[RMDB]
RNA sequence: GGGAACGACUCGAGUAGAGUCGAAAAGAUAUGGACCACACGAGUGCCAGUGAUGCUCACAACGAUUUGCUCGGAAACGAGCAUGUCGUUGUGAGCAUCACGGUAAUUCUCGCGUGGUCCUAAGUCAUCUGGACAUAAAGUUCGCUUUAUGUCCAGAAAAAGAAACAACAACAACAAC
Reactivity to DMS in 0.01 (KOAc 150mM, MgCl2 10mM, bicine 150mM(pH8.5), 24C), signal-to-noise 2, nucleotides 027 to 126: g010a050u000a300u000g000g010a000c010c000a010c000a010c010g010a020g040u000g000c010c010a090g070u000g010a010u000g000c010u010c010a020c000a010a020c000g000a010u010u000u000g020c000u010c000g000g000a130a150a250c000g010a020g000c010a000u000g010u000c000g010u000u000g000u000g000a000g020c000a000u000c000a000c010g010g010u010a030a170u010u010c010u000c000g020c030g050u010g010g000u000c000c000u010a000a060g020u020c030a130
Chemical mapping of a 177-nucleotide RNA with DMS.
It was measured as part of the RMDB library TTRINS.
In probing experiments dimethyl sulfate is read out at A N1 and C N3, which are open when not base-paired.
DMS adducts were read by reverse transcription with MarathonRT.
The reactions ran in a buffer of 150 mM KOAc, 10 mM MgCl2 and 150 mM bicine (pH 8.5), at 24 C.
Values cover nucleotides 27 to 126.